[RMDB]
An RNA of 177 nucleotides, treated with 2A3 and read out base by base.

RNA sequence: GGGAACGACUCGAGUAGAGUCGAAAAACUCGAAAGAAUCCCAGACCCUCCAGCCAAAGGGUAAAUGGGACCAACAACGGCGGCAGCACCGUCUAGCUGCGGGCAUUAGCCUGGAAAACUAGUGCUCGUGACAAGCAGCUUUCGAGCUGCUUGUCACAAAAGAAACAACAACAACAAC
Reactivity to 2A3 in 0.01 (KOAc 150mM, MgCl2 10mM, bicine 150mM(pH8.5), 24C), signal-to-noise 2, nucleotides 027 to 126: a000c040u050c010g100a030a080a000g080a110a080u040c000c000c000a000g080a010c000c000c030u070c140c070a150g040c070c100a280a050a020g000g010g010u010a000a000a090u000g000g020g000a000c000c010a030a120c050a100a080c020g000g020c000g030g060c000a020g010c010a020c080c010g220u080c020u100a030g000c000u000g000c000g010g000g000c000a000u000u040a000g000c020c050u080g040g050a020a020a000a000c020u020a000g000u000g000c000u010c000

The 2A3 profile rests on 1,197 reads.
Values are in units of 0.01, from 0 to 300, in steps of 10.